This 177-nucleotide RNA was probed chemically with DMS and 2A3. It was measured as part of the RMDB library OK2TRN. For 2A3 the reverse transcriptase was SuperScript II with manganese. Values cover nucleotides 27 to 126. The RNA was probed in 150 mM KOAc, 10 mM MgCl2 and 150 mM bicine (pH 8.5) at 24 C.
[RMDB]
RNA sequence: GGGAACGACUCGAGUAGAGUCGAAAAUGGUGGUGGGCACCUGUAGUCCCAGCUACUGGAGGCUGAGGCAGGAGAAUGGCGUGAACCCAGGAGGCGGAGGUUGCAGUGAGCCGAGAUCAUGCCACUGCAGCGAAUGUAAAUUCGUUUACAUUCGCUGAAAAGAAACAACAACAACAAC
Reactivity to DMS in 0.01 (KOAc 150mM, MgCl2 10mM, bicine 150mM(pH8.5), 24C), signal-to-noise 9, nucleotides 027 to 126: u010g010g020u000g000g020u000g000g010g020c050a090c030c020u010g010u000a060g000u000c010c000c010a090g000c030u010a080c050u010g010g000a120g010g010c030u000g000a070g000g010c030a040g000g000a070g010a080a080u010g010g020c050g020u000g010a060a100c050c010c030a080g010g000a100g010g010c050g010g000a070g000g010u000u000g010c020a030g010u000g010a110g020c020c050g010a110g010a070u000c080a090u010g010c010c010a040c060u000g010
Reactivity to 2A3 in 0.01 (KOAc 150mM, MgCl2 10mM, bicine 150mM(pH8.5), 24C), signal-to-noise 4, nucleotides 027 to 126: u110g020g010u000g000g030u060g010g040g000c040a030c060c000u000g020u030a020g040u030c000c020c000a010g030c020u110a080c020u060g070g020a070g080g000c040u050g030a050g100g000c020a010g020g060a040g040a080a130u110g030g010c060g020u060g040a050a040c010c010c010a030g050g000a070g050g020c040g020g050a060g050g010u060u070g010c010a000g000u010g080a020g000c000c020g040a050g010a080u120c040a040u130g000c010c000a030c040u060g000